[RMDB]
RNA sequence: GGGAACGACUCGAGUAGAGUCGAAAAGAUAUGGAUAACAGUGGACAUGCUGUUUCUCGGAAACGAGAAAUCAGCAACAGCCACAGUUAUCCUAAGUCAAACUCUGGUGCGUUCGCGCACCAGAGAACAUAUGGAUACGGUUCGCCGUAUCCAUAUGAAAAGAAACAACAACAACAAC
Reactivity to DMS in 0.01 (KOAc 150mM, MgCl2 10mM, bicine 150mM(pH8.5), 24C), signal-to-noise 8, nucleotides 027 to 126: g000a020u000a100u010g000g000a010u000a000a000c010a060g040u000g010g000a070c120a120u010g010c000u000g000u000u000u000c000u000c000g010g000a020a020a050c000g000a020g000a010a010a010u010c020a000g020c000a070a060c280a170g000c000c000a010c000a080g010u000u000a000u000c000c000u000a010a090g000u000c000a180a130a220c010u000c000u000g000g020u000g020c000g020u000u010c300g030c010g020c000a000c000c000a000g000a000g000a080a140
Reactivity to 2A3 in 0.01 (KOAc 150mM, MgCl2 10mM, bicine 150mM(pH8.5), 24C), signal-to-noise 7, nucleotides 027 to 126: g000a000u020a010u070g000g000a000u000a010a010c010a040g000u000g010g050a080c120a300u290g000c000u000g000u000u010u010c000u000c000g010g010a040a010a010c010g000a000g000a020a020a030u300c060a010g020c050a020a030c080a030g000c010c000a000c020a000g000u010u000a000u000c000c010u010a010a000g000u000c050a100a020a170c010u000c000u010g000g000u010g020c010g020u030u080c300g000c000g000c190a010c000c000a000g000a000g000a000a000
The record gives the reactivity of an RNA of 177 nucleotides to DMS and 2A3. For DMS the reverse transcriptase was MarathonRT. Conditions: 150 mM KOAc, 10 mM MgCl2 and 150 mM bicine (pH 8.5), 24 C.